[RMDB]
About this RNA: Structure probing data (2A3 and DMS) for a 207-nucleotide construct. The RNA was probed in 150 mM KOAc, 10 mM MgCl2 and 150 mM bicine (pH 8.5) at 24 C. Source: RMDB library M2RFPK, as collected in RNAgym. For DMS, 5,597 sequencing reads were counted.
RNA sequence: GGGAACGACUCGAGUAGAGUCGAAAAGCCCAGAAGCCUCCCCUCACAAUCGUUUCAGUCCAAAAUUGAUUCGGCGGCCCUGUCAUGAGGCCGAAACGAAGGCACGUACCCCUUCGAAUGGCGUCGGAACUUUCAGUCGUAUUCGUACGACUGAAAACAUUAGAGUACCUUUCGAGGUACUCUAAUGAAAAGAAACAACAACAACAAC
Reactivity to 2A3 in 0.01 (KOAc 150mM, MgCl2 10mM, bicine 150mM(pH8.5), 24C), signal-to-noise 2, nucleotides 027 to 156: g040c010c010c000a040g240a130a040g090c000c000u010c000c000c010c010u030c010a040c000a020a050u070c010g010u030u040u030c020a020g040u010c080c100a050a090a140a160u080u060g050a050u060u040c010g020g020c000g000g000c030c000c000u020g000u020c000a040u030g010a030g010g000c000c000g030a000a000a000c000g000a010a020g010g000c090a000c170g150u170a080c010c000c010c000u000u000c010g000a030a060u030g010g000c010g020u050c050g080g060a060a050c010u020u010u000c000a000g000u000c000g000u000a020u020u040c130g020u030a000c000g000a000c000u000g000a000a000a000a000
Reactivity to DMS in 0.01 (KOAc 150mM, MgCl2 10mM, bicine 150mM(pH8.5), 24C), signal-to-noise 3, nucleotides 027 to 156: g020c030c010c030a180g000a130a140g010c020c010u000c020c000c020c010u000c030a110c050a050a130u010c030g030u000u000u010c020a050g060u000c030c100a070a050a190a160u000u010g000a090u010u000c030g050g020c030g000g010c010c010c000u010g000u000c140a100u000g000a040g040g010c000c000g010a030a030a040c010g020a050a020g030g050c040a060c070g010u000a140c050c050c010c020u000u000c030g010a090a160u010g020g010c080g020u010c030g000g010a050a100c080u000u010u000c000a010g010u000c000g020u000a030u000u010c290g060u000a000c000g000a020c010u010g000a000a010a020a150